This 177-nucleotide RNA was probed chemically with DMS and 2A3.
Conditions: 150 mM KOAc, 10 mM MgCl2 and 150 mM bicine (pH 8.5), 24 C.
The data come from the RNA Mapping Database (RMDB), library OK2TRN.
For 2A3, 13,584 sequencing reads were counted.
Reactivities are given for positions 27 through 126.

[RMDB]
RNA sequence: GGGAACGACUCGAGUAGAGUCGAAAAGGUUUCCGACGAGCCGGUGGUGUCGUUGGCCUGAUCGCCCAGCUGGGACAGGUCGGGCUGGUCGGUGAGCCCGGUCGCCUCGACCGAGAUCGCUUCGGCGACUAACUAACGGUUUCGACCGUUAGUUAGUAAAAGAAACAACAACAACAAC
Reactivity to DMS in 0.01 (KOAc 150mM, MgCl2 10mM, bicine 150mM(pH8.5), 24C), signal-to-noise 9, nucleotides 027 to 126: g000g010u000u010u010c010c010g020a060c040g010a130g010c010c010g020g020u010g020g030u000g010u000c020g020u000u000g000g010c030c010u000g000a100u010c090g000c040c000c050a130g010c090u010g010g000g010a150c130a100g010g000u000c000g010g000g010c010u000g020g010u000c010g000g010u010g010a150g010c140c010c040g010g000u000c010g000c130c020u000c030g010a030c010c000g000a060g000a220u000c030g000c030u000u000c100g010g020c050g010
Reactivity to 2A3 in 0.01 (KOAc 150mM, MgCl2 10mM, bicine 150mM(pH8.5), 24C), signal-to-noise 5, nucleotides 027 to 126: g050g000u030u080u020c020c010g010a030c020g010a020g010c040c040g160g160u210g030g040u130g070u080c040g030u050u070g010g010c000c000u070g010a080u090c050g050c010c020c000a040g080c130u250g010g000g040a050c040a100g010g000u000c000g020g000g000c030u050g040g000u010c010g000g020u070g060a040g030c010c000c000g020g040u030c010g010c000c020u120c040g030a020c000c000g000a010g000a090u050c020g000c060u060u050c030g070g010c020g010